[RMDB]
An RNA of 207 nucleotides, treated with 2A3 and DMS and read out base by base. The reactions ran in a buffer of 150 mM KOAc, 10 mM MgCl2 and 150 mM bicine (pH 8.5), at 24 C.
RNA sequence: GGGAACGACUCGAGUAGAGUCGAAAAGGGGAGCUAGGCACUCCCUGUGACCCGUGCCGAAAUGCGGGGGCGACUGUCUGGUGAGGGCAACCAGGCCUUUGGCAGUCUUCAUGAAAUCGUAGAGUCUCUGUCCUUUUGGAUCGGGGGUUUGCAUAUGCAAGGAAGUAUUGUUCGCAAUACUUCCUUGAAAAGAAACAACAACAACAAC
Reactivity to 2A3 in 0.01 (KOAc 150mM, MgCl2 10mM, bicine 150mM(pH8.5), 24C), signal-to-noise 2, nucleotides 027 to 156: g000g000g010g000a010g010c040u030a070g150g000c060a040c030u010c000c000c000u000g030u020g050a020c000c010c030g000u090g080c000c040g110a080a070a010u190g000c030g040g000g000g020g010c010g000a030c020u020g010u050c000u010g060g010u120g060a080g020g020g000c000a070a010c060c030a070g050g110c000c000u100u090u030g010g000c000a010g000u000c000u010u000c080a060u140g030a080a080a080u170c130g030u060a070g030a060g120u010c010u000c000u020g080u230c020c020u090u160u070u170g010g000a010u090c010g000g000g000g010g010u020u090u070g050c050a040u060a010u290g030
Reactivity to DMS in 0.01 (KOAc 150mM, MgCl2 10mM, bicine 150mM(pH8.5), 24C), signal-to-noise 2, nucleotides 027 to 156: g000g010g060g000a020g030c010u000a120g000g050c220a080c000u000c000c000c010u000g010u010g000a130c010c010c020g020u000g010c020c010g040a070a070a060u010g030c060g020g020g020g010g000c020g000a110c010u010g010u010c010u010g040g020u000g000a300g000g020g020c070a100a150c070c010a100g000g000c040c060u000u010u010g000g030c010a060g000u000c020u040u000c050a050u000g020a080a050a080u000c070g000u000a090g000a300g000u000c010u000c010u000g010u020c030c040u000u000u010u000g060g000a050u000c090g000g010g020g050g010u000u000u000g000c030a100u000a140u000g000